[RMDB]
RNA sequence: GGGAACGACUCGAGUAGAGUCGAAAAGGGGUCCAAGCGGGAGACAGAGCGAACUUCUUGGACCUACUGAAGCCUCCACGGUAGCUAGAAGACUCUGUCAUCGAUCGCUUGGACGGAGGCACCCAAACGACUCGUCUUGUUCGCAAGACGAGUCGAACAAGAUCUACAUGUUCGCAUGUAGAUCUUGAAAAGAAACAACAACAACAAC
Reactivity to 2A3 in 0.01 (KOAc 150mM, MgCl2 10mM, bicine 150mM(pH8.5), 24C), signal-to-noise 7, nucleotides 027 to 156: g060g000g030g010u000c000c000a000a000g000c010g010g010g010a040g000a010c000a000g010a000g020c120g160a110a090c020u020u020c010u140u300g040g010a040c010c000u000a000c000u000g000a060a010g000c000c000u000c000c000a010c010g020g000u000a000g020c030u020a020g010a020a010g010a060c000u010c000u010g000u010c000a050u300c030g020a010u010c000g000c000u000u000g000g000a000c020g010g000a000g000g000c000a040c000c010c000a040a090a020c010g000a010c000u000c000g020u010c010u010u040g030u100u130c300g000c140a000a010g000a000c000g000a000g000u000c000g000a010a010
Reactivity to DMS in 0.01 (KOAc 150mM, MgCl2 10mM, bicine 150mM(pH8.5), 24C), signal-to-noise 2, nucleotides 027 to 156: g000g020g050g000u000c000c000a010a040g030c010g030g000g020a070g010a050c000a020g000a040g020c020g010a130a220c020u010u000c000u000u000g010g020a050c300c000u010a010c020u000g010a040a110g030c010c010u010c010c010a300c050g010g000u020a040g030c020u000a060g010a060a050g000a090c030u000c000u000g010u000c010a210u000c130g000a070u000c000g000c030u010u000g010g010a010c000g010g020a020g040g040c020a210c010c010c010a050a120a160c010g000a020c000u000c010g000u000c010u000u000g030u000u020c300g000c000a030a030g010a000c000g000a000g000u000c000g010a030a190
Chemical mapping of a 207-nucleotide RNA with 2A3 and DMS. Conditions: 150 mM KOAc, 10 mM MgCl2 and 150 mM bicine (pH 8.5), 24 C. Values cover nucleotides 27 to 156. For DMS, 3,917 sequencing reads were counted. The 2A3 profile rests on 14,839 reads.